[RMDB]
RNA sequence: GGGAACGACUCGAGUAGAGUCGAAAAGAUAUGGAUGCAGAACUACUCUCCAAACUCCAACAGCUCGGAAACGAGACAUGGAGGUAGAGAGCUGCAUCCUAAGUCAAAAGUGCUGUUCGCAGCACAACAAGGAUUUAUCGUUCGCGAUAAAUCCUUGAAAAGAAACAACAACAACAAC
Reactivity to 2A3 in 0.01 (KOAc 150mM, MgCl2 10mM, bicine 150mM(pH8.5), 24C), signal-to-noise 4, nucleotides 027 to 126: g040a010u050a030u150g000g000a000u000g000c010a010g010a150a080c110u160a070c000u270c010u010c060c050a270a300a130c020u000c040c000a080a060c060a210g070c000u000c000g050g000a040a060a040c020g020a000g030a030c020a050u130g020g020a000g030g020u140a060g000a000g000a010g010c000u000g000c000a000u010c000c000u010a010a000g000u010c010a030a060a050a110g000u010g000c000u010g070u110u110c300g000c110a000g000c020a000c000a010a020
Reactivity to DMS in 0.01 (KOAc 150mM, MgCl2 10mM, bicine 150mM(pH8.5), 24C), signal-to-noise 4, nucleotides 027 to 126: g010a080u010a300u010g010g000a010u000g010c010a020g000a060a040c080u030a300c000u010c000u000c010c040a040a100a240c020u000c010c010a040a130c270a160g010c000u000c010g000g000a070a080a140c010g020a010g000a030c070a160u010g010g010a000g010g000u010a050g000a000g030a030g040c000u000g000c000a000u000c000c000u000a020a110g000u010c060a090a050a150a120g020u000g000c010u000g010u000u000c240g010c000a000g020c000a010c010a120a170

Source information
The record gives the reactivity of an RNA of 177 nucleotides to 2A3 and DMS. It was measured as part of the RMDB library TTRDEL. For 2A3 the reverse transcriptase was SuperScript II with manganese. Conditions: 150 mM KOAc, 10 mM MgCl2 and 150 mM bicine (pH 8.5), 24 C.